[RMDB]
RNA sequence: GGGAACGACUCGAGUAGAGUCGAAAAGAUAUGGACGUCAUGCAGCAUCGAUCUACCGGGUCGGAAACGACCCGUAGGGAGCUGGGUGACGUCCUAAGUCAAAGCUACGUAGUUCGCUACGUAGCAAGACAUUAGAUCUCUUCGGAGAUCUAAUGUCAAAAGAAACAACAACAACAAC
Reactivity to DMS in 0.01 (KOAc 150mM, MgCl2 10mM, bicine 150mM(pH8.5), 24C), signal-to-noise 5, nucleotides 027 to 126: g020a040u000a300u010g000g000a010c000g010u000c000a010u000g010c010a010g010c000a300u010c180g000a030u010c010u000a010c090c130g030g000g010u000c000g000g000a030a090a160c010g000a010c000c000c010g020u000a000g000g000g000a010g040c010u010g010g010g040u000g000a000c010g010u000c000c000u000a010a050g000u000c040a110a160a150g000c010u010a000c010g020u000a010g020u000u020c290g030c000u000a010c000g010u000a000g010c010a030a020
Reactivity to 2A3 in 0.01 (KOAc 150mM, MgCl2 10mM, bicine 150mM(pH8.5), 24C), signal-to-noise 5, nucleotides 027 to 126: g030a020u050a030u120g020g000a010c000g000u010c000a050u120g300c030a080g010c020a150u300c070g070a070u000c010u020a020c080c300g010g000g000u000c020g000g000a030a040a000c000g000a000c030c000c010g000u010a000g010g000g000a030g010c000u020g040g090g040u000g010a000c000g000u010c000c000u000a000a000g000u010c010a050a020a050g000c000u010a000c010g000u000a000g030u050u110c300g020c200u000a000c000g000u000a000g000c000a000a000